Chemical mapping of a 177-nucleotide RNA with 2A3 and DMS. In probing experiments dimethyl sulfate is read out at A N1 and C N3, which are open when not base-paired. For DMS the reverse transcriptase was MarathonRT. Values cover nucleotides 27 to 126. The reactions ran in a buffer of 150 mM KOAc, 10 mM MgCl2 and 150 mM bicine (pH 8.5), at 24 C. For 2A3, 2,939 sequencing reads were counted.
RNA sequence: GGGAACGACUCGAGUAGAGUCGAAAAGAUAUGGAGCACACAAGCAACAGCUACACGUGUCGGAAACGACAUGUAGACAUGCUUGGUGCUCCUAAGUCAAAUCCAUCGAUGUUCGCAUCGAUGGAAAGCUUUAGCAAGUCUUCGGACUUGCUAAAGCAAAAGAAACAACAACAACAAC
Reactivity to 2A3 in 0.01 (KOAc 150mM, MgCl2 10mM, bicine 150mM(pH8.5), 24C), signal-to-noise 2, nucleotides 027 to 126: g000a010u000a000u040g000g000a010g010c010a010c030a030c000a070a000g060c020a130a300c120a300g030c020u090a000c060a030c190g290u100g000u060c020g000g020a000a000a000c000g000a010c000a010u000g020u000a010g000a040c070a150u300g000c010u010u000g000g000u010g010c010u020c000c000u010a000a000g000u000c010a000a020a160u030c000c000a000u010c000g000a010u000g020u070u130c300g000c150a000u000c000g000a010u000g000g000a110a020a000
Reactivity to DMS in 0.01 (KOAc 150mM, MgCl2 10mM, bicine 150mM(pH8.5), 24C), signal-to-noise 1, nucleotides 027 to 126: g000a010u000a070u030g020g000a010g000c010a000c020a150c040a020a020g020c010a050a130c300a160g030c010u000a010c000a000c300g050u040g020u000c000g010g000a010a000a060c010g000a010c000a030u000g000u000a000g020a080c080a110u000g010c000u020u000g000g030u000g000c000u000c000c000u000a000a030g010u000c020a140a100a170u010c000c000a050u000c000g050a010u000g000u010u030c300g000c010a000u000c020g000a040u010g000g000a000a070a010